[RMDB]
RNA sequence: GGGAACGACUCGAGUAGAGUCGAAAACUUGCAUGAACGGAUUAACGACUCCCCCACUGUCCCCGGCCGGAAGCCGGCGAACCCGACAUCCCAGUGAAGAGUCUGGGGACCCCCGUUGGGAAGCGAAAUAAACGAACUAGUUCGCUAGUUCGUUUAUAAAAGAAACAACAACAACAAC
Reactivity to 2A3 in 0.01 (KOAc 150mM, MgCl2 10mM, bicine 150mM(pH8.5), 24C), signal-to-noise 9, nucleotides 027 to 126: c020u040u100g030c040a060u070g070a110a020c040g030g080a090u100u130a130a050c040g110a100c030u040c010c010c010c000c010a050c040u040g030u020c020c000c000c000g020g000c010c010g110g020a070a020g020c010c010g000g000c020g010a020a040c010c010c010g000a010c010a040u050c000c000c000a010g020u040g070a090a100g030a040g090u020c020u030g010g000g000g020a010c000c010c000c000c020g010u010u010g020g010g030a050a020g070c030g030a090a070
Reactivity to DMS in 0.01 (KOAc 150mM, MgCl2 10mM, bicine 150mM(pH8.5), 24C), signal-to-noise 8, nucleotides 027 to 126: c040u010u010g010c050a070u010g000a070a080c060g000g000a130u010u020a080a120c080g000a100c050u000c010c030c010c020c020a060c100u010g000u010c020c020c010c020g010g010c030c030g000g010a130a130g010c010c020g010g010c050g000a050a120c030c000c020g000a070c080a080u020c000c000c010a070g010u010g010a110a140g010a180g010u010c010u000g010g010g000g010a170c030c020c020c030c040g030u000u000g020g000g000a100a110g000c060g000a070a060